[RMDB]
An RNA of 207 nucleotides, treated with 2A3 and read out base by base. It was measured as part of the RMDB library VIROID. Values cover nucleotides 27 to 156.
RNA sequence: GGGAACGACUCGAGUAGAGUCGAAAACGGACUUUCUUCUAUCUCCGAAGCCGGUUUGAGGCCCGGCGAAACGCGGGCCUGUCUCCUAAGAUGCCUCCGCUAGUCGAGCGGACUUGGCCUCUUCCGCCCGAGGACCUUUUCUUUCUGAUCUUGCUUGCAAGUCAACACAGUUCGCUGUGUUGACUUGAAAAGAAACAACAACAACAAC
Reactivity to 2A3 in 0.01 (KOAc 150mM, MgCl2 10mM, bicine 150mM(pH8.5), 24C), signal-to-noise 1, nucleotides 027 to 156: c020g030g010a000c020u150u100u060c000u100u030c020u130a230u110c080u050c100c040g040a020a010g080c010c000g000g050u060u000u120g030a000g000g000c000c010c020g140g020c080g060a110a120a020c200g030c030g040g000g000c030c000u000g020u030c050u000c000c010u030a050a000g030a030u060g000c010c000u030c000c000g000c010u050a070g150u200c130g050a020g000c000g000g010a000c020u070u100g010g000c000c000u000c000u070u010c000c000g060c050c000c010g060a170g000g010a070c000c020u000u090u060u050c050u040u160u040c050u090g060a140u060c030u100u060g080c000u010u050g020